[RMDB]
RNA sequence: GGGAACGACUCGAGUAGAGUCGAAAAUAAAAAGGGACGUGCAGCAGGCGAGGAACCCAAGCAGCUGUCCCGGGUGCCAUCGCCCUACGUGAGGACACCAGGCGUGGAUAGCACCAGGCCUUAAAAAACUCCUAUACAAGUUCGCUUGUAUAGGAGUAAAAGAAACAACAACAACAAC
Reactivity to 2A3 in 0.01 (KOAc 150mM, MgCl2 10mM, bicine 150mM(pH8.5), 24C), signal-to-noise 2, nucleotides 027 to 126: u070a010a050a030a050a040g030g010g000a020c050g070u060g040c040a060g010c010a020g020g030c040g040a060g120g060a070a040c000c010c040a030a020g000c020a030g000c010u090g010u030c000c010c000g000g000g000u010g000c000c000a110u040c010g030c020c000c000u040a030c010g040u020g040a110g090g160a110c020a010c050c030a010g030g000c060g050u020g090g020a070u030a040g010c010a020c020c000a000g080g050c020c000u150u170a100a130a020a020a020
Reactivity to DMS in 0.01 (KOAc 150mM, MgCl2 10mM, bicine 150mM(pH8.5), 24C), signal-to-noise 3, nucleotides 027 to 126: u010a030a050a050a090a090g010g000g010a040c050g010u000g030c020a060g040c160a100g000g010c020g020a160g010g000a140a040c020c000c060a070a120g010c010a090g010c050u000g000u000c010c000c020g000g000g010u000g000c010c030a050u000c010g000c020c020c050u010a050c190g010u000g000a120g010g010a100c020a030c030c100a060g000g010c100g030u010g010g010a040u000a080g010c070a060c020c010a060g010g010c020c020u000u030a000a050a060a070a050
The data come from the RNA Mapping Database (RMDB), library M2PK90. Chemical mapping of a 177-nucleotide RNA with 2A3 and DMS. In probing experiments dimethyl sulfate is read out at A N1 and C N3, which are open when not base-paired. Conditions: 150 mM KOAc, 10 mM MgCl2 and 150 mM bicine (pH 8.5), 24 C.